[RMDB]
RNA sequence: GGGAACGACUCGAGUAGAGUCGAAAAAGGCGCAGCUCAUCAAACUGUGCCGAUUACGUCCCUGCCAUUUGUACACACCGCCCGUCGUUGUUUCCGAUGAUGGUGCAAUACAGGUGAUCGGACAGUCGAGUGCUUCACUUGACCGAAAGUUCACCGAGAUAGUAAACUGGUUCGCCAGUUUACUAUCAAAAGAAACAACAACAACAAC
Reactivity to 2A3 in 0.01 (KOAc 150mM, MgCl2 10mM, bicine 150mM(pH8.5), 24C), signal-to-noise 9, nucleotides 027 to 156: a000g010g000c010g010c000a010g000c020u060c110a250u100c080a250a100a050c000u000g000u000g000c000c000g000a000u010u120a050c060g030u010c000c000c000u010g070c040c020a130u100u110u190g090u120a040c080a010c010a020c070c030g040c040c030c020g030u040c010g010u030u040g010u020u040u000c020c010g010a040u040g020a030u070g050g010u040g020c030a050a050u160a100c070a070g000g000u000g000a010u010c010g010g010a010c000a010g000u000c000g020a000g010u020g040c230u250u300c040a000c000u010u000g000a010c010c000g060a050a010a000g000u010u000c000a000c000c010g000a020
Reactivity to DMS in 0.01 (KOAc 150mM, MgCl2 10mM, bicine 150mM(pH8.5), 24C), signal-to-noise 5, nucleotides 027 to 156: a150g000g030c010g080c000a010g030c020u000c100a200u010c250a130a040a030c000u000g010u000g020c000c010g010a090u000u000a080c130g000u000c020c000c010u000g000c030c040a130u010u000u000g010u000a080c080a080c030a060c020c040g010c020c010c010g020u010c020g020u000u000g020u000u000u000c040c030g010a070u000g010a050u000g000g000u000g000c010a100a070u010a060c050a100g010g030u010g010a020u010c020g020g000a300c040a040g000u000c000g020a040g030u000g020c190u010u000c040a050c000u000u000g000a070c000c000g010a010a180a280g010u000u000c020a050c010c010g030a130